[RMDB]
RNA sequence: GGGAACGACUCGAGUAGAGUCGAAAAACUUUGUUAUUUGUCGUUGCUUUAAAAAGUCAACGGCAACUAAGCAUGCUUCAAGAAUUAGCUUUUUUCUGUUCAGAUCUCGAAAACAUUCAGCGGCUCACAAUAUGUAGCUGUUCGCAGCUACAUAUUGAAAAGAAACAACAACAACAAC
Reactivity to 2A3 in 0.01 (KOAc 150mM, MgCl2 10mM, bicine 150mM(pH8.5), 24C), signal-to-noise 4, nucleotides 027 to 126: a010c060u120u080u060g040u090u050a090u050u010u000g000u010c000g000u010u000g030c000u090u120u210a130a180a050a020a010g130u170c020a000a000c000g000g000c000a000a000c000u030a020a020g070c020a030u080g010c020u070u080c070a110a100g050a150a150u120u040a070g030c020u060u020u050u010u060u030c040u050g050u050u020c030a030g010a120u030c040u010c080g050a040a050a050a050c020a030u050u070c010a020g030c010g060g000c030u030c020a040
Reactivity to DMS in 0.01 (KOAc 150mM, MgCl2 10mM, bicine 150mM(pH8.5), 24C), signal-to-noise 4, nucleotides 027 to 126: a110c090u010u000u010g020u000u000a040u000u000u000g010u000c000g010u000u000g020c020u010u000u000a070a060a080a070a020g000u020c010a010a000c000g020g010c010a000a000c110u000a050a050g010c070a050u000g010c070u000u000c090a070a070g020a040a050u000u010a080g010c060u000u010u000u000u000u010c030u010g010u000u000c070a070g010a060u000c060u000c040g000a070a060a050a080c100a080u000u000c060a050g010c100g010g000c040u000c100a150
The record gives the reactivity of an RNA of 177 nucleotides to 2A3 and DMS. The DMS profile rests on 4,553 reads. For DMS the reverse transcriptase was MarathonRT.